[RMDB]
This 177-nucleotide RNA was probed chemically with DMS and 2A3. The data come from the RNA Mapping Database (RMDB), library OK1LIB. The 2A3 profile rests on 676 reads. The DMS profile rests on 4,898 reads.
RNA sequence: GGGAACGACUCGAGUAGAGUCGAAAAUAAAGCAAUCAGCUGUCCUAAAGAUGAUUGGAUGAGUGUUUUUCGGAGAAGUUUGAUUAAGGAGAGGUUUGUAGCUGCAAGAAAAGAGCUUCCAAAUCAAGGGAUAUAACUCAUUCGUGAGUUAUAUCCCAAAAGAAACAACAACAACAAC
Reactivity to DMS in 0.01 (KOAc 150mM, MgCl2 10mM, bicine 150mM(pH8.5), 24C), signal-to-noise 3, nucleotides 027 to 126: u030a100a080a030g010c020a040a030u050c090a110g000c020u000g000u000c030c020u010a050a090a070g030a060u010g000a070u010u020g000g010a100u030g000a120g010u000g030u000u000u010u030u010c040g000g010a110g000a080a070g010u010u010u010g000a130u030u000a050a090g020g020a040g000a150g000g010u010u000u020g000u020a110g020c030u000g010c130a070a150g000a050a050a030a070g000a070g000c000u000u010c070c030a010a040a060u010c140a100a150
Reactivity to 2A3 in 0.01 (KOAc 150mM, MgCl2 10mM, bicine 150mM(pH8.5), 24C), signal-to-noise 2, nucleotides 027 to 126: u210a000a040a040g110c090a010a070u040c010a070g010c000u040g020u040c000c010u060a120a080a000g030a050u040g020a080u040u090g120g060a070u060g030a100g140u050g100u000u010u000u050u050c040g080g070a000g050a200a050g060u070u040u180g050a060u000u200a040a020g030g010a080g090a040g120g060u110u150u130g050u130a000g010c030u090g030c050a080a000g090a050a080a030a000g000a010g000c010u020u000c070c050a000a000a100u010c040a030a200